[RMDB]
RNA sequence: GGGAACGACUCGAGUAGAGUCGAAAAGAUAUGGACCUCAGGUUGACAUGAACGUAAUCGGAAACGAUUACUGUUCAACAGCAACAGAGGUCCUAAGUCAAACACUGCGCGGUUCGCCGCGCAGUGAGUAGCGAUUAAGGUUCGCCUUAAUCGCUACAAAAGAAACAACAACAACAAC
Reactivity to 2A3 in 0.01 (KOAc 150mM, MgCl2 10mM, bicine 150mM(pH8.5), 24C), signal-to-noise 2, nucleotides 027 to 126: g000a000u010a020u070g000g000a000c000c000u000c050a070g300g050u020u020g060a190c170a300u270g000a100a000c000g000u000a000a000u010c010g010g000a000a000a000c000g010a000u000u000a000c010u060g000u010u000c000a000a000c160a040g000c000a000a020c010a050g000a000g000g000u000c000c000u000a000a000g000u010c010a020a040a000c010a000c000u010g010c020g000c020g000g160u040u110c300g090c130c000g000c000g000c010a000g000u010g000a010
Reactivity to DMS in 0.01 (KOAc 150mM, MgCl2 10mM, bicine 150mM(pH8.5), 24C), signal-to-noise 2, nucleotides 027 to 126: g010a010u000a070u010g000g000a020c000c000u010c010a150g000g010u020u010g010a060c120a120u010g010a040a020c020g010u000a020a000u000c000g010g000a020a040a040c000g020a010u000u000a010c000u020g040u000u000c000a090a060c250a210g010c010a030a020c000a110g000a010g000g020u000c000c010u000a000a050g000u000c000a210a150a260c020a010c000u000g020c010g010c010g010g000u000u020c260g040c000c000g010c020g020c000a000g010u000g010a050

Structure probing data (2A3 and DMS) for a 177-nucleotide construct.
The RNA was probed in 150 mM KOAc, 10 mM MgCl2 and 150 mM bicine (pH 8.5) at 24 C.
For 2A3 the reverse transcriptase was SuperScript II with manganese.
Source: RMDB library TTRDES, as collected in RNAgym.